[RMDB]
RNA sequence: GGGAACGACUCGAGUAGAGUCGAAAAAUGAAGGCAUCGAUGGCCGUCACCAUGCAACCGAUAUGGGCGUAGAUGCCGCCGAUAAUCAAUUGGUCGCGGUUCCAGUCUUUCAUGCGUUGCAGAAGGAGUAUCAUAUAGCGUUCGCGCUAUAUGAUACAAAAGAAACAACAACAACAAC
Reactivity to DMS in 0.01 (KOAc 150mM, MgCl2 10mM, bicine 150mM(pH8.5), 24C), signal-to-noise 9, nucleotides 027 to 126: a090u000g010a070a040g010g000c030a060u010c160g020a140u010g010g020c010c010g000u000c160a070c030c020a100u010g010c080a050a050c100c060g000a090u010a040u000g000g020g010c020g010u010a110g010a060u010g010c120c010g010c030c020g020a040u010a060a130u010c150a110a110u010u010g010g010u000c150g020c020g010g010u000u010c050c050a200g000u000c010u000u000u010c080a050u000g010c100g000u000u000g010c020a040g010a100a090g010g000a200
Reactivity to 2A3 in 0.01 (KOAc 150mM, MgCl2 10mM, bicine 150mM(pH8.5), 24C), signal-to-noise 8, nucleotides 027 to 126: a000u100g010a040a010g010g010c020a040u100c150g210a150u220g060g010c020c000g030u020c010a040c030c010a020u060g000c020a050a070c040c060g020a030u030a050u180g070g020g000c030g040u080a070g030a190u130g040c010c000g000c010c010g040a030u080a080a130u110c080a040a140u060u110g050g000u060c020g000c010g030g000u080u020c040c010a030g010u020c000u020u100u070c030a040u090g030c040g080u040u040g000c030a020g030a080a030g090g060a070

Source: RMDB library OK2TRN, as collected in RNAgym. An RNA of 177 nucleotides, treated with DMS and 2A3 and read out base by base. Values cover nucleotides 27 to 126. DMS (dimethyl sulfate) methylates the pairing face of unpaired adenines and cytosines. The 2A3 profile rests on 14,626 reads. Values are in units of 0.01, from 0 to 300, in steps of 10. The RNA was probed in 150 mM KOAc, 10 mM MgCl2 and 150 mM bicine (pH 8.5) at 24 C.